The record gives the reactivity of an RNA of 177 nucleotides to 2A3 and DMS. For 2A3, 1,955 sequencing reads were counted. Conditions: 150 mM KOAc, 10 mM MgCl2 and 150 mM bicine (pH 8.5), 24 C. DMS adducts were read by reverse transcription with MarathonRT. For 2A3 the reverse transcriptase was SuperScript II with manganese. As a SHAPE reagent, 2A3 marks flexible, mostly unpaired nucleotides at the ribose 2'-OH. It was measured as part of the RMDB library OK2TRN.
RNA sequence: GGGAACGACUCGAGUAGAGUCGAAAAGGCCGGCUCCGAGAUGUGGUGCAGUAAAGACCUGGGUUGGAUCGUUGGCGCUCUCCAGAAAGAACACCAGCGUGCACUGGAUCAGAGGAGGCUCGCAGACAUCCUUGUGACAAUUCGUUGUCACAAGGAUAAAAGAAACAACAACAACAAC
Reactivity to 2A3 in 0.01 (KOAc 150mM, MgCl2 10mM, bicine 150mM(pH8.5), 24C), signal-to-noise 2, nucleotides 027 to 126: g050g000c030c000g010g060c030u000c010c080g040a040g010a070u100g070u010g300g010u000g000c030a030g020u210a050a090a050g060a040c010c030u170g300g010g000u110u020g020g110a030u060c030g010u000u080g000g010c030g030c020u030c010u000c000c000a040g140a090a120a000g020a030a000c070a060c010c000a000g010c030g010u030g000c020a020c010u000g010g050a030u020c010a010g030a030g120g020a000g040g010c030u030c030g000c020a000g040a090c030
Reactivity to DMS in 0.01 (KOAc 150mM, MgCl2 10mM, bicine 150mM(pH8.5), 24C), signal-to-noise 3, nucleotides 027 to 126: g000g040c020c060g000g000c010u000c010c020g010a300g000a030u000g010u000g000g010u000g010c030a050g030u000a130a130a180g000a080c050c010u000g010g010g030u000u010g000g000a090u000c040g030u000u000g010g000c070g010c010u000c030u000c050c040a130g000a150a140a080g000a040a030c050a060c010c010a020g020c040g010u000g010c040a020c000u000g010g000a040u010c010a040g010a300g000g000a040g010g000c010u010c280g040c030a230g010a060c170